This 177-nucleotide RNA was probed chemically with 2A3 and DMS. Values cover nucleotides 27 to 126.
RNA sequence: GGGAACGACUCGAGUAGAGUCGAAAAACAAACAAUAGAAUGAAACAAAGAGUCGUGCAAAGGAGAGGCUCGACAGAUGCACGACAAAGCGAGCCUACAAAAGACACCGGGAAAACCGGUGUCGAAACCGCAUGGAGGAGUUCGCUCCUUCAUGCGGAAAAGAAACAACAACAACAAC
Reactivity to 2A3 in 0.01 (KOAc 150mM, MgCl2 10mM, bicine 150mM(pH8.5), 24C), signal-to-noise 1, nucleotides 027 to 126: a000c020a010a050a010c020a000a060u110a050g070a000a040u130g020a050a160a000c060a060a110a030g050a030g010u000c000g000u000g000c010a060a000a070g200g040a030g020a000g020g010c000u010c000g060a030c010a030g120a020u050g000c000a010c020g020a000c000a040a010a010g010c000g000a000g000c000c000u030a040c080a080a090a000a010g000a000c000a000c000c000g000g000g090a010a080a030a030c000c000g000g010u000g000u000c000g000a000a000a000
Reactivity to DMS in 0.01 (KOAc 150mM, MgCl2 10mM, bicine 150mM(pH8.5), 24C), signal-to-noise 1, nucleotides 027 to 126: a150c030a030a050a120c050a130a080u050a030g010a110a080u060g000a150a100a010c110a010a050a060g000a170g010u000c020g000u000g000c000a010a170a090g010g030a040g000a060g000g000c000u000c000g000a110c040a070g000a120u010g010c020a030c000g020a080c030a010a070a120g020c030g000a010g000c010c030u000a050c180a120a070a110a020g000a000c000a000c000c000g000g000g010a040a010a120a120c000c000g030g010u000g010u000c020g040a050a020a060